[RMDB]
RNA sequence: GGGAACGACUCGAGUAGAGUCGAAAAAGGUCGUAUGCGUAAGUUCACCGGCGAAGUUUCUCUGACUGGUCAGAACUUCGUUAUGGACCCAAGCAAAACUGUUGGCGAUCUGUUGAAAGAGAACAACGGUUACGUCUUUCUUCGGAAAGACGUAACCAAAAGAAACAACAACAACAAC
Reactivity to DMS in 0.01 (KOAc 150mM, MgCl2 10mM, bicine 150mM(pH8.5), 24C), signal-to-noise 2, nucleotides 027 to 126: a000g020g000u000c000g040u000a140u000g000c000g000u010a250a300g000u000u000c000a060c080c140g090g010c010g010a020a010g000u000u000u020c250u000c010u000g010a030c160u010g030g000u000c030a000g020a030a010c000u000u000c000g020u000u010a080u000g000g010a020c000c000c000a110a300g020c000a040a090a050a140c100u010g000u000u010g000g000c010g020a050u000c010u000g030u010u000g000a020a070a050g000a090g020a060a070c070a020a110c170